Overview
This 177-nucleotide RNA was probed chemically with DMS and 2A3. Conditions: 150 mM KOAc, 10 mM MgCl2 and 150 mM bicine (pH 8.5), 24 C. High 2A3 reactivity points to a flexible backbone, as in loops and unpaired stretches. For 2A3, 2,280 sequencing reads were counted. For 2A3 the reverse transcriptase was SuperScript II with manganese.

RNA sequence: GGGAACGACUCGAGUAGAGUCGAAAAAGCUCUGGUGCGUAUCAUGGAUGGGAGCAUCAACACAGAGCAGGAAAUUUUAGUGAUGGGGACGGGUAAAAAACAUGGCGUUUUAGGGCUAUACUACCCCCAGAUUACGACAUUUCGAUGUCGUAAUCUGAAAAGAAACAACAACAACAAC
Reactivity to DMS in 0.01 (KOAc 150mM, MgCl2 10mM, bicine 150mM(pH8.5), 24C), signal-to-noise 4, nucleotides 027 to 126: a130g000c020u000c010u000g020g020u000g010c050g020u000a090u010c090a080u020g010g010a090u000g000g020g020a190g020c040a040u010c060a090a070c100a070c090a070g010a040g020c010a120g010g000a080a080a090u000u000u000u010a080g010u000g020a060u000g020g010g010g000a130c120g000g000g010u000a000a050a040a040a030a040c110a070u010g020g010c110g020u000u000u010u000a080g010g020g010c040u000a050u010a050c100u010a150c050c010c010c090
Reactivity to 2A3 in 0.01 (KOAc 150mM, MgCl2 10mM, bicine 150mM(pH8.5), 24C), signal-to-noise 3, nucleotides 027 to 126: a000g010c010u020c010u000g040g020u050g000c050g040u070a070u140c030a060u090g230g010a090u060g050g020g040a040g000c000a030u030c010a030a050c050a000c010a060g050a000g020c050a010g060g060a010a080a050u230u280u080u080a090g040u070g090a070u050g010g040g010g050a020c080g030g010g010u100a060a130a000a010a000a000c080a050u080g120g030c070g020u040u090u100u040a020g000g040g000c000u020a020u040a120c000u050a060c010c000c000c020